[RMDB]
RNA sequence: GGGAACGACUCGAGUAGAGUCGAAAAGAUAUGGAACAGGAAUUUGCGAAGAACUCGGAAACGAGGGAGCAGGGUUCUGUUCCUAAGUCAAAAGCCUGAGAUGCCACUUCGGUGGCAUCUCAGGCAACAAUGUGAUGGAGUUCGCUCCAUCACAUUGAAAAGAAACAACAACAACAAC
Reactivity to DMS in 0.01 (KOAc 150mM, MgCl2 10mM, bicine 150mM(pH8.5), 24C), signal-to-noise 1, nucleotides 027 to 126: g010a050u000a300u010g000g020a020a020c000a010g000g000a010a030u020u010u010g020c020g020a100a140g020a120a130c000u000c010g000g010a120a130a180c010g000a020g000g000g010a050g010c000a000g000g000g000u000u000c000u000g020u000u010c000c010u010a020a040g000u010c010a100a140a190a170g020c010c000u000g010a020g000a020u000g010c020c020a060c000u010u000c200g010g030u010g000g010c000a020u000c000u010c000a040g000g020c010a020a000
Structure probing data (DMS) for a 177-nucleotide construct. DMS adducts were read by reverse transcription with MarathonRT. It was measured as part of the RMDB library TTRDEL.